About this RNA:
The record gives the reactivity of an RNA of 177 nucleotides to DMS and 2A3. The reactions ran in a buffer of 150 mM KOAc, 10 mM MgCl2 and 150 mM bicine (pH 8.5), at 24 C. DMS adducts were read by reverse transcription with MarathonRT. The DMS profile rests on 2,142 reads. Reactivities are given for positions 27 through 126. 2A3 is a SHAPE reagent: it acylates the 2'-hydroxyl of flexible nucleotides of all four kinds. Source: RMDB library OK2TST, as collected in RNAgym.

RNA sequence: GGGAACGACUCGAGUAGAGUCGAAAACUGUGCGCCAGGUUACACUCCCAGCAGAAGUUAUGGCCUGUGGAUAAAAAGGAUCUAAUCUGUGAGGAAGGGGAGGAUCUAUUGCUCCUUUUGCGCUAUGUAGCUGUUAAAGCUUCGGCUUUAACAGCUAAAAAGAAACAACAACAACAAC
Reactivity to DMS in 0.01 (KOAc 150mM, MgCl2 10mM, bicine 150mM(pH8.5), 24C), signal-to-noise 3, nucleotides 027 to 126: c060u020g060u010g020c010g010c030c020a060g000g000u010u000a090c160a070c110u000c010c010c040a150g010c100a060g000a100a050g010u000u010a070u010g000g000c100c010u010g010u000g000g000a060u010a010a070a060a100a200g000g000a020u000c120u010a060a100u000c000u000g000u000g010a130g020g010a080a090g000g010g000g010a160g000g000a040u000c080u010a110u000u000g000c060u010c020c000u010u000u000u010g020c040g030c050u000a050u000g020
Reactivity to 2A3 in 0.01 (KOAc 150mM, MgCl2 10mM, bicine 150mM(pH8.5), 24C), signal-to-noise 2, nucleotides 027 to 126: c030u040g050u080g090c010g050c000c020a010g000g030u030u030a030c050a030c020u010c020c000c000a040g040c040a010g030a180a010g060u090u100a040u160g030g000c000c000u010g000u040g070g000a030u200a070a130a010a030a050g030g000a010u010c010u000a030a060u000c000u080g050u070g100a040g050g090a050a060g080g020g000g000a000g030g000a000u010c030u040a140u050u200g000c010u020c010c000u000u100u120u080g010c090g000c040u000a070u130g140